This 177-nucleotide RNA was probed chemically with DMS. Values are in units of 0.01, from 0 to 300, in steps of 10.
[RMDB]
RNA sequence: GGGAACGACUCGAGUAGAGUCGAAAAGAUAUGGAUCUGUUCUAGAGAUGUGUGAUAGGCGAGGAUCGAGUGUAUCGGAAACGAUACCUCGGGAGCCUGCACACAUCUCUAGAACAGAUCCUAAGUCGAGAAUCUAUAGGUUCGCCUAUAGAUUCUCAAAAGAAACAACAACAACAAC
Reactivity to DMS in 0.01 (KOAc 150mM, MgCl2 10mM, bicine 150mM(pH8.5), 24C), signal-to-noise 1, nucleotides 027 to 126: g000a090u000a300u010g000g010a010u000c000u000g010u000u000c000u000a010g000a020g000a030u010g000u000g000u000g020a060u010a020g050g000c010g000a110g000g000a070u010c020g010a010g020u030g010u010a010u000c000g000g000a140a080a300c000g030a030u000a010c000c010u000c000g010g010g000a060g000c000c000u000g020c010a010c010a020c000a000u000c000u000c000u000a000g020a000a000c010a000g000a010u000c010c000u010a010a110g020u010c080
About this RNA:
For DMS the reverse transcriptase was MarathonRT. The RNA was probed in 150 mM KOAc, 10 mM MgCl2 and 150 mM bicine (pH 8.5) at 24 C.